[RMDB]
RNA sequence: GGGAACGACUCGAGUAGAGUCGAAAAGAUAUGGAUCCCUAGGCUCGAUAAGCUGAAGUGUCGGAAACGACACCAGCUUUUGACGAGCCUGGGAUCCUAAGUCAAAAUCCCUGGUUCGCCAGGGAAACAAUCGUGCAACGUUCGCGUUGCACGAUUGAAAAGAAACAACAACAACAAC
Reactivity to 2A3 in 0.01 (KOAc 150mM, MgCl2 10mM, bicine 150mM(pH8.5), 24C), signal-to-noise 1, nucleotides 027 to 126: g010a000u020a020u050g000g030a020u070c000c040c100u130a030g000g010c010u000c090g100a270u060a280a000g000c000u040g050a300a020g130u000g000u030c020g000g060a070a090a050c000g000a000c000a010c000c020a000g040c000u020u070u030u220g300a190c080g030a020g050c010c000u000g000g010g000a000u000c000c000u010a010a000g000u000c000a020a030a070a300u090c030c000c000u010g000g090u040u070c300g090c070c000a000g020g000g000a000a000a010
Reactivity to DMS in 0.01 (KOAc 150mM, MgCl2 10mM, bicine 150mM(pH8.5), 24C), signal-to-noise 1, nucleotides 027 to 126: g000a040u010a250u000g000g010a010u000c000c000c000u020a000g030g000c000u010c020g010a140u010a020a000g020c000u000g000a230a120g020u000g010u000c020g000g000a060a040a140c000g000a020c000a000c010c030a040g010c020u000u010u000u000g030a210c140g000a020g010c000c000u010g000g000g020a000u000c000c000u010a000a050g010u000c030a190a060a120a100u000c000c010c000u000g000g000u000u010c300g030c000c000a030g020g000g010a010a000a100
Structure probing data (2A3 and DMS) for a 177-nucleotide construct. Values cover nucleotides 27 to 126. It was measured as part of the RMDB library TTRDES. The RNA was probed in 150 mM KOAc, 10 mM MgCl2 and 150 mM bicine (pH 8.5) at 24 C. The 2A3 profile rests on 1,899 reads. For DMS the reverse transcriptase was MarathonRT.